The record gives the reactivity of an RNA of 177 nucleotides to DMS and 2A3. Reactivities are given for positions 27 through 126. For 2A3 the reverse transcriptase was SuperScript II with manganese. It was measured as part of the RMDB libraries RFM100 and RFMREP.
RNA sequence: GGGAACGACUCGAGUAGAGUCGAAAAAAAUAACGGAUUAUCCUCGAAAUCGAGCCGUAUGGUCAGACAGACAACUUUAGGGUUAUAUAGAUAGUGCAAUGAGAUAUAACCUAGUAACUUAAAGUUAUUUCUAUUCUGAGUUCGCUCAGAAUAGAAAAAAAGAAACAACAACAACAAC
Reactivity to DMS in 0.01 (KOAc 150mM, MgCl2 10mM, bicine 150mM(pH8.5), 24C), signal-to-noise 3, nucleotides 027 to 126: a030a060a060u060a080a070c060g000g000a130u020u000a070u020c140c020u000c070g010a070a110a120u050c060g010a040g010c010c000g030u010a030u010g010g010u000c040a120g000a090c210a080g000a080c100a050a020c030u030u010u000a050g000g000g000u000u020a000u000a000u010a080g000a120u020a070g010u030g010c140a090a050u060g000a140g000a020u000a010u000a010a020c000c000u000a080g010u010a040a070c100u070u000a010a010a030g000u000u010a090
Reactivity to 2A3 in 0.01 (KOAc 150mM, MgCl2 10mM, bicine 150mM(pH8.5), 24C), signal-to-noise 4, nucleotides 027 to 126: a000a000a020u220a040a030c030g030g010a030u110u060a050u210c010c000u010c010g030a100a120a160u200c030g000a050g010c000c000g010u060a030u070g060g000u080c020a000g020a140c020a010g050a010c040a070a020c060u030u080u170a060g020g000g000u000u020a020u000a000u010a020g140a190u070a140g130u130g150c070a090a120u200g010a080g100a150u040a000u000a020a000c000c000u020a050g030u060a030a060c030u060u110a080a000a000g020u010u020a060